[RMDB]
RNA sequence: GGGAACGACUCGAGUAGAGUCGAAAAUGUCACCUCGAACAAAUGGAAAAGCACUCCGCGGUUUCCCCGUUCGUCGUCAAAUUGCAUUAUUCUCUUGUGCUGCAAACAGAGAAGAAACUGUGCGUGCCCAUUUAUCGUAUUUCGAUACGAUAAAUGGAAAAGAAACAACAACAACAAC
Reactivity to 2A3 in 0.01 (KOAc 150mM, MgCl2 10mM, bicine 150mM(pH8.5), 24C), signal-to-noise 9, nucleotides 027 to 126: u140g030u060c030a040c060c010u030c030g060a080a040c040a090a130a090u190g040g020a070a070a030a020g020c010a020c060u050c040c050g010c030g030g020u010u030u020c010c000c000c010g020u050u050c020g040u020c010g040u040c040a040a100a130u130u110g010c020a010u040u070a070u200u000c020u000c000u060u140g050u060g080c120u090g040c040a030a120a070c020a030g030a000g020a070a020g050a040a110a030c060u060g010u030g040c040g030u040g020c000
Reactivity to DMS in 0.01 (KOAc 150mM, MgCl2 10mM, bicine 150mM(pH8.5), 24C), signal-to-noise 7, nucleotides 027 to 126: u010g010u010c080a060c030c020u000c050g030a060a060c120a060a110a090u040g010g010a060a050a120a120g030c030a040c050u010c040c060g030c050g010g010u010u000u000c010c020c090c060g010u000u010c030g010u010c060g010u030c110a050a080a080u050u010g010c040a040u010u020a150u000u010c010u000c000u000u040g020u010g000c060u020g020c110a060a100a060c040a020g010a020g000a040a040g020a070a050a090c130u000g010u010g010c090g010u010g010c140